[RMDB]
RNA sequence: GGGAACGACUCGAGUAGAGUCGAAAAUCGGACGGAGGCCAUGAGUCGCAACGCAAAGCCGCGGCAAGUGGAGUUAGCGAGAAGAGACUAGGCUUUGGUUUCUUCAAGUGAAGCGGUCACCAAUCAGAAUAGCUUGCGCAGUUCGCUGCGCAAGCAAGCCAAUAACGGUAUUCGUACCGUUAUUGGCAAAAGAAACAACAACAACAAC
Reactivity to 2A3 in 0.01 (KOAc 150mM, MgCl2 10mM, bicine 150mM(pH8.5), 24C), signal-to-noise 1, nucleotides 027 to 156: u090c000g040g050a040c060g070g040a010g000g000c000c000a030u000g010a010g020u000c000g000c020a040a130c070g020c120a130a070a070g020c030c040g000c000g000g010c050a020a000g030u000g010g020a090g040u050u080a060g020c040g010a010g000a070a010g010a010g050a000c010u090a030g090g200c060u080u140u070g040g010u000u000u000c010u020u000c030a040a010g010u020g070a060a020g100c020g030g000u020c020a020c110c000a040a060u150c050a010g130a190a120u090a040g000c000u020u000g010c040g010c020a010g050u010u160c170g090c210u000g000c050g000c000a000a000g040c000a000a020

Conditions: 150 mM KOAc, 10 mM MgCl2 and 150 mM bicine (pH 8.5), 24 C. An RNA of 207 nucleotides, treated with 2A3 and read out base by base.